[RMDB]
RNA sequence: GGGAACGACUCGAGUAGAGUCGAAAAGCUUAUGUGAUGACGGAGGUGAACCGGUCGGCGCAGACUGCCCCAGCUUCUGAUUUCGGGACCCGGGAGGAGGAGAUGGCGAUGGUCCCGGUUCAAAUGGCUGUGUAGGAAAGUUCGCUUUCCUACACAGAAAAGAAACAACAACAACAAC
Reactivity to DMS in 0.01 (KOAc 150mM, MgCl2 10mM, bicine 150mM(pH8.5), 24C), signal-to-noise 2, nucleotides 027 to 126: g000c050u000u010a070u000g040u020g000a100u010g000a100c070g000g000a100g010g020u000g020a070a090c100c030g010g020u000c090g020g010c040g020c050a040g010a100c090u000g010c030c000c030c080a110g000c020u010u020c050u010g010a110u000u000u020c020g020g000g000a050c060c040c080g000g010g010a070g000g000a090g020g010a090g000a060u020g010g010c050g010a110u010g000g000u000c010c000c010g010g000u020u010c040a030a100a110u020g020g010
Reactivity to 2A3 in 0.01 (KOAc 150mM, MgCl2 10mM, bicine 150mM(pH8.5), 24C), signal-to-noise 1, nucleotides 027 to 126: g020c020u140u060a110u150g060u100g030a180u070g020a040c050g050g040a030g080g040u050g100a050a010c000c000g020g050u020c030g060g040c070g000c060a020g010a080c030u070g000c030c000c000c000a030g020c000u140u040c010u030g140a140u070u140u220c020g000g010g000a040c000c080c030g080g020g040a090g010g000a010g000g020a130g010a080u150g020g100c060g020a030u040g020g010u010c000c000c000g010g000u050u040c010a030a030a090u140g070g000